About this RNA:
Chemical mapping of a 177-nucleotide RNA with DMS and 2A3. For DMS the reverse transcriptase was MarathonRT. For DMS, 2,302 sequencing reads were counted. For 2A3 the reverse transcriptase was SuperScript II with manganese. It was measured as part of the RMDB library OK1LIB. Conditions: 150 mM KOAc, 10 mM MgCl2 and 150 mM bicine (pH 8.5), 24 C.

RNA sequence: GGGAACGACUCGAGUAGAGUCGAAAACCCGGCAGCUCCACGUCGGCCACCCCCACGAAGAAGUCGAACGCGGGGUGCAGCUCAAGAGCCAGGUUGGCGUUGUCGGGCUGCAUAAACUGCUCCGGGGGACGUACAUGGUUUUCGAACCAUGUACGUCAAAAGAAACAACAACAACAAC
Reactivity to DMS in 0.01 (KOAc 150mM, MgCl2 10mM, bicine 150mM(pH8.5), 24C), signal-to-noise 2, nucleotides 027 to 126: c000c000c010g000g000c060a050g030c000u020c010c000a100c050g000u000c020g010g020c000c180a290c040c000c000c010c050a270c130g000a090a080g000a110a170g000u010c070g000a050a050c050g000c200g030g000g040g020u010g000c070a040g010c000u010c010a100a100g010a130g050c010c020a130g020g050u020u020g050g000c100g040u000u020g040u000c240g000g000g000c000u000g000c000a060u020a030a130a050c070u000g030c070u010c040c010g000g010g000g000
Reactivity to 2A3 in 0.01 (KOAc 150mM, MgCl2 10mM, bicine 150mM(pH8.5), 24C), signal-to-noise 5, nucleotides 027 to 126: c010c000c000g010g010c020a000g000c000u000c010c000a020c010g020u020c020g020g000c010c000a040c010c000c010c010c000a080c070g090a080a200g110a160a010g130u070c060g040a150a020c030g030c100g000g010g000g010u020g000c020a020g000c010u000c060a080a070g020a020g120c010c000a110g080g140u150u120g050g000c050g040u050u060g080u090c040g000g010g010c000u000g000c000a010u240a100a080a020c040u050g020c020u060c040c000g010g000g020g040